RNA sequence: GGGAACGACUCGAGUAGAGUCGAAAACCCGACGGCCGGACGAGUGUUGUACACGAUAGGUCGAAGAGUGGUGCAUGGCCGUUACGACGAGUGAGGUGACUUUUGGGUUAAAUCCGGGAAGUAGUGAUACGCUAGUAUACUUCGGUAUACUAGCGUAAAAAGAAACAACAACAACAAC
Reactivity to 2A3 in 0.01 (KOAc 150mM, MgCl2 10mM, bicine 150mM(pH8.5), 24C), signal-to-noise 4, nucleotides 027 to 126: c000c000c010g010a020c020g010g000c020c000g070g030a060c060g090a050g060u040g030u040u110g070u100a100c000a010c030g040a080u100a090g060g010u030c000g000a030a000g020a000g040u090g010g000u020g030c060a060u030g060g020c010c000g000u030u050a050c080g010a000c030g010a020g050u090g070a070g010g050u050g010a030c020u040u050u100u150g020g020g020u060u150a060a080a080u020c020c020g030g010g000a060a040g010u140a000g020u020g070a070
Reactivity to DMS in 0.01 (KOAc 150mM, MgCl2 10mM, bicine 150mM(pH8.5), 24C), signal-to-noise 6, nucleotides 027 to 126: c010c000c000g020a120c090g010g000c010c000g000g010a110c090g000a140g010u020g010u000u010g020u020a240c070a070c040g010a100u020a080g010g030u010c020g000a080a090g000a090g000u000g010g020u010g020c050a080u020g010g010c020c020g000u010u010a060c080g000a080c060g000a070g010u020g000a090g000g020u010g000a060c070u000u010u000u010g010g000g000u010u010a040a080a100u020c020c030g010g010g020a050a090g010u000a050g010u010g000a210